[RMDB]
RNA sequence: GGGAACGACUCGAGUAGAGUCGAAAAAUGAUGGUACGCCUUCUUGAUAAUGAAUAUCUCUGCCUUGUGAUUUACCGUAUUCAAUCAUUUGAUUAGGGAAUGUUGAGCAAUUAGGAAGGUCUUGCUCGUGAAUAUACAGUUUCGACUGUAUAUUCACAAAAGAAACAACAACAACAAC
Reactivity to 2A3 in 0.01 (KOAc 150mM, MgCl2 10mM, bicine 150mM(pH8.5), 24C), signal-to-noise 9, nucleotides 027 to 126: a000u160g060a030u140g010g040u050a010c030g000c010c000u010u000c000u010u040g020a030u040a220a080u090g100a050a020u040a070u050c010u000c010u020g040c020c000u030u020g020u010g020a030u020u030u120a120c090c070g090u100a170u070u150c040a010a020u020c010a020u030u020u060g130a170u080u130a020g030g000g020a080a090u080g030u080u070g060a050g050c040a030a030u020u000a020g010g020a020a000g010g030u010c030u030u070g000c010u030c080
Reactivity to DMS in 0.01 (KOAc 150mM, MgCl2 10mM, bicine 150mM(pH8.5), 24C), signal-to-noise 9, nucleotides 027 to 126: a080u010g010a100u000g010g010u000a060c300g010c020c010u000u000c010u000u010g000a040u010a070a090u000g000a050a050u000a050u000c010u000c020u000g010c190c020u000u000g010u000g000a040u000u000u000a110c130c120g010u000a070u000u000c130a030a020u000c030a030u000u000u000g000a070u000u000a050g010g000g000a040a040u000g020u000u000g000a050g010c140a060a030u000u000a030g000g010a030a040g000g010u000c080u000u000g010c030u000c190